[RMDB]
RNA sequence: GGGAACGACUCGAGUAGAGUCGAAAAGAGUCGACAAUUGCGCCUAAAACGAUGGAUGAUUUUGUAAAACCAGUCAUUGAAAAUUUAGGAUUUACAAUAGGUGAAGAUAUUUGUUUAGUGCAUUGUCAAAUGGAGUGGAGUUCGCUCCACUCCAUUUAAAAGAAACAACAACAACAAC
Reactivity to DMS in 0.01 (KOAc 150mM, MgCl2 10mM, bicine 150mM(pH8.5), 24C), signal-to-noise 4, nucleotides 027 to 126: g000a070g020u020c080g010a030c020a000a010u030u010g020c020g010c050c100u000a080a020a030a050c020g000a010u010g000g020a230u010g000a130u010u020u020u000g010u010a030a010a020a030c020c020a120g000u010c120a100u030u010g020a070a040a070a060u020u020u040a110g010g000a110u000u000u000a010c020a010a020u010a040g010g030u050g000a150a050g000a220u020a030u010u020u010g030u000u000u000a120g010u030g010c030a020u000u000g010u000c020
Reactivity to 2A3 in 0.01 (KOAc 150mM, MgCl2 10mM, bicine 150mM(pH8.5), 24C), signal-to-noise 5, nucleotides 027 to 126: g060a010g090u130c050g010a000c010a020a020u140u140g000c010g000c010c050u130a040a030a000a030c020g020a020u030g060g050a020u060g060a060u070u070u020u080g030u030a020a010a010a020c000c000a010g130u130c070a100u040u180g250a110a110a090a100u120u190u110a080g000g020a020u000u030u000a030c030a030a010u040a110g160g100u200g060a100a040g050a050u070a080u090u180u280g050u030u020u000a010g010u010g000c000a010u010u000g000u010c020